[RMDB]
Structure probing data (2A3 and DMS) for a 177-nucleotide construct.
It was measured as part of the RMDB library OK2TST.
As a SHAPE reagent, 2A3 marks flexible, mostly unpaired nucleotides at the ribose 2'-OH.
2A3 adducts were read by reverse transcription with SuperScript II with manganese.
Values are in units of 0.01, from 0 to 300, in steps of 10.
For DMS, 24,624 sequencing reads were counted.
RNA sequence: GGGAACGACUCGAGUAGAGUCGAAAACACCGACCGGCUGGCUCGGCGCGCCUGGCAGCGUUUCCAGGCCAUCGAGGCCCGUGGCGGCUUCGUCGAGGCCCACGACUUCCUGGCCGGCCAGAUCGCCGUGUCAGGAAGGAUUCGUCCUUCCUGACACAAAAGAAACAACAACAACAAC
Reactivity to 2A3 in 0.01 (KOAc 150mM, MgCl2 10mM, bicine 150mM(pH8.5), 24C), signal-to-noise 4, nucleotides 027 to 126: c050a040c010c010g040a050c020c020g020g000c010u020g010g000c060u060c200g040g000c030g010c040g010c030c010u010g030g000c050a110g150c070g080u060u150u010c020c010a010g000g000c000c000a070u060c030g020a010g020g020c040c070c010g080u090g110g050c160g030g010c010u060u060c020g230u070c120g040a050g020g000c000c010c000a040c010g060a070c020u090u050c010c010u020g040g010c000c000g000g000c000c000a030g010a180u090c030g020c100c060
Reactivity to DMS in 0.01 (KOAc 150mM, MgCl2 10mM, bicine 150mM(pH8.5), 24C), signal-to-noise 9, nucleotides 027 to 126: c120a180c080c020g000a080c140c020g010g010c020u000g000g020c030u010c090g020g010c110g010c200g000c030c010u000g010g010c150a160g010c180g010u010u010u010c030c030a050g000g010c010c030a040u000c090g010a050g000g020c080c020c060g030u000g010g020c170g000g000c030u000u000c020g000u000c120g000a070g010g010c020c010c040a060c040g010a130c070u000u010c040c040u000g010g000c010c010g000g010c010c010a050g010a060u000c060g010c120c100